Chemical mapping of a 177-nucleotide RNA with DMS and 2A3.

RNA sequence: GGGAACGACUCGAGUAGAGUCGAAAAGGCUCUGUACUGCCCACCAGCCCGGUGCCAGGACAGCAGCAACGACAGCGGACCAAGAGGCAGCACUGGCGACGUUUCUCAGUUUUGCGGGCUCGCGGGAUCGAGUAUUUUACUUCGGUAAAAUACUCGAAAAAGAAACAACAACAACAAC
Reactivity to DMS in 0.01 (KOAc 150mM, MgCl2 10mM, bicine 150mM(pH8.5), 24C), signal-to-noise 3, nucleotides 027 to 126: g020g010c020u000c020u000g010u000a060c050u010g020c160c090c030a060c030c020a130g000c090c110c060g020g000u010g010c240c010a050g000g000a030c060a020g000c070a010g030c040a060a090c100g000a070c110a060g010c040g000g020a040c050c070a080a130g020a140g010g000c040a050g000c040a080c030u000g000g020c050g010a090c100g000u000u000u000c010u000c040a100g000u000u000u010u010g020c070g010g010g000c040u000c040g020c090g000g020g020a140
Reactivity to 2A3 in 0.01 (KOAc 150mM, MgCl2 10mM, bicine 150mM(pH8.5), 24C), signal-to-noise 1, nucleotides 027 to 126: g010g000c010u000c020u040g040u080a030c040u030g050c040c050c010a010c010c010a010g150c030c070c050g050g010u050g000c010c000a020g030g000a030c020a020g080c050a000g010c000a070a030c020g160a050c010a020g040c020g020g040a030c010c020a060a050g070a090g140g020c040a040g000c010a010c060u020g050g020c060g060a030c070g040u000u110u000c050u020c020a030g010u070u030u050u180g050c020g040g030g020c040u030c020g000c010g010g080g000a050
Conditions: 150 mM KOAc, 10 mM MgCl2 and 150 mM bicine (pH 8.5), 24 C. The data come from the RNA Mapping Database (RMDB), library OK2TST.